[RMDB]
Description:
Structure probing data (DMS) for a 177-nucleotide construct. Conditions: 150 mM KOAc, 10 mM MgCl2 and 150 mM bicine (pH 8.5), 24 C. For DMS, 925 sequencing reads were counted. It was measured as part of the RMDB library TTRINS.
RNA sequence: GGGAACGACUCGAGUAGAGUCGAAAAGAUAUGGAACGUGCGAGUAGCAGAAACGAAGAACGGUGUUCAAUCGGAAACGAUUGAACACCGGGAGUUUCUGAACUACUAUAACGCACGUUCCUAAGUCCUUCAGUUCUUACUUCGGUAAGAACUGAAGAAAAGAAACAACAACAACAAC
Reactivity to DMS in 0.01 (KOAc 150mM, MgCl2 10mM, bicine 150mM(pH8.5), 24C), signal-to-noise 1, nucleotides 027 to 126: g010a130u010a300u010g000g010a020a010c000g060u000g040c000g020a100g050u000a010g000c020a030g010a000a000a000c010g000a120a120g000a130a300c060g000g010u000g010u020u000c010a010a000u000c000g030g000a170a140a180c010g050a010u000u010g010a010a000c000a000c000c010g020g050g020a100g000u000u000u010c010u000g000a120a100c040u000a050c000u000a170u000a070a300c020g010c000a000c010g000u020u000c000c000u010a000a090g000u010c020